An RNA of 177 nucleotides, treated with DMS and 2A3 and read out base by base. DMS adducts were read by reverse transcription with MarathonRT. The reactions ran in a buffer of 150 mM KOAc, 10 mM MgCl2 and 150 mM bicine (pH 8.5), at 24 C. Values cover nucleotides 27 to 126. It was measured as part of the RMDB library OK2TRN.
[RMDB]
RNA sequence: GGGAACGACUCGAGUAGAGUCGAAAAAUAAACGCCAGGCUGAUGAGGAACGUUAGCUAAAAACUGUUUUGAAUCAAAUGUGGUCAUUUGCAAAAAUUAGUGAAAAUCGAACCGCUUGUUAGCAAUCGAUGUCAUGCUAUUUCGAUAGCAUGACAUCAAAAGAAACAACAACAACAAC
Reactivity to DMS in 0.01 (KOAc 150mM, MgCl2 10mM, bicine 150mM(pH8.5), 24C), signal-to-noise 3, nucleotides 027 to 126: a110u000a040a080a090c170g000c020c040a070g060g010c060u000g000a040u000g010a110g010g010a080a130c050g000u010u000a120g010c060u000a060a060a100a050a070c070u020g030u000u000u000u010g010a160a090u010c030a010a030a070u000g020u010g020g000u000c060a040u000u000u000g010c110a030a030a010a050a050u000u010a020g000u010g000a070a040a060a070u000c110g010a110a110c090c080g020c050u000u000g000u000u000a050g010c020a150a100u040c170
Reactivity to 2A3 in 0.01 (KOAc 150mM, MgCl2 10mM, bicine 150mM(pH8.5), 24C), signal-to-noise 2, nucleotides 027 to 126: a030u060a020a040a000c060g050c040c010a030g050g000c000u010g000a030u010g020a030g010g030a040a000c030g000u050u030a020g000c020u050a040a050a070a030a010c030u050g030u060u060u020u080g070a050a050u090c030a050a080a180u130g020u090g100g080u150c010a020u000u020u070g020c010a000a020a010a100a150u090u060a040g030u010g080a050a010a050a090u080c010g020a020a030c040c000g070c090u010u070g030u110u050a000g000c000a030a100u110c090